[RMDB]
RNA sequence: GGGAACGACUCGAGUAGAGUCGAAAAGUGGGGAUGGAGACCAGGCCGUGGCCAGAGCAGAUAUGGAAGCCCAUGAAAUUGAUGAACUGAGAGUUGCUUCCAGUCCAGAGCGCACCAUCUGGAAUUCAAACUGAACAACCUUCGGGUUGUUCAGUUUAAAAGAAACAACAACAACAAC
Reactivity to DMS in 0.01 (KOAc 150mM, MgCl2 10mM, bicine 150mM(pH8.5), 24C), signal-to-noise 3, nucleotides 027 to 126: g000u020g030g000g000g000a050u010g000g000a090g000a050c070c090a040g000g020c040c080g020u030g020g020c010c030a080g010a130g010c050a100g000a100u020a090u050g020g000a050a060g000c030c060c020a080u050g000a080a050a080u020u030g020a090u020g010a120a100c130u000g010a160g010a120g000u030u030g000c030u010u020c030c020a100g000u020c000c030a040g000a030g020c090g000c050a040c030c020a090u000c000u010g000g000a040a050u050u050c140
Reactivity to 2A3 in 0.01 (KOAc 150mM, MgCl2 10mM, bicine 150mM(pH8.5), 24C), signal-to-noise 2, nucleotides 027 to 126: g010u000g000g000g000g000a040u040g000g110a060g050a060c000c090a070g030g030c060c000g030u030g050g000c050c030a010g020a020g010c160a080g010a050u180a230u150g000g010a040a010g010c020c020c020a070u090g070a090a050a070u110u040g050a100u050g070a100a000c080u110g030a060g000a000g200u070u030g010c010u020u000c010c000a000g000u000c020c000a000g000a030g020c070g030c010a010c060c010a030u000c000u000g020g000a000a050u130u100c010